RNA sequence: GGGAACGACUCGAGUAGAGUCGAAAAGAGGGUUGGUUCGCCAACCCUCCAUUAAAAUCAGCGCUAAAUAAUUAGCAGGCGUUACCGCUGAACGCCUGCAUAGACUCAGUCUGUUCGCAGACUGAAAGUUAUCUAAAGCCUUCGGGCUUUAGAUAACAAAAGAAACAACAACAACAAC
Reactivity to 2A3 in 0.01 (KOAc 150mM, MgCl2 10mM, bicine 150mM(pH8.5), 24C), signal-to-noise 2, nucleotides 027 to 126: g000a010g020g020g000u010u010g020g000u050u100c150g010c050c000a000a010c000c000c000u000c000c000a010u020u030a020a000a010a070u020c020a010g020c020g070c250u110a070a040a040u120a080a100u230u240a080g020c000a000g010g000c000g010u000u030a080c030c000g000c010u010g000a010a000c000g000c000c000u000g000c000a020u020a000g030a000c030u000c050a000g010u010c010u000g030u010u080c160g040c070a000g010a000c000u000g010a020a000a000
Reactivity to DMS in 0.01 (KOAc 150mM, MgCl2 10mM, bicine 150mM(pH8.5), 24C), signal-to-noise 2, nucleotides 027 to 126: g010a010g000g020g000u000u000g010g000u010u000c240g020c010c000a020a000c000c000c000u000c000c020a040u010u010a060a080a120a120u010c000a010g000c010g050c300u020a020a000a020u000a030a040u000u010a110g010c000a010g000g000c000g000u000u010a070c110c010g000c000u000g010a070a030c000g000c010c010u010g010c000a050u010a080g020a150c120u000c000a000g010u000c000u000g010u000u010c150g010c000a000g000a010c000u000g000a010a060a080

Source: RMDB library M2PK50, as collected in RNAgym. The record gives the reactivity of an RNA of 177 nucleotides to 2A3 and DMS. Reactivities are given for positions 27 through 126. The RNA was probed in 150 mM KOAc, 10 mM MgCl2 and 150 mM bicine (pH 8.5) at 24 C. 2A3 adducts were read by reverse transcription with SuperScript II with manganese. In probing experiments dimethyl sulfate is read out at A N1 and C N3, which are open when not base-paired. The DMS profile rests on 1,480 reads. As a SHAPE reagent, 2A3 marks flexible, mostly unpaired nucleotides at the ribose 2'-OH.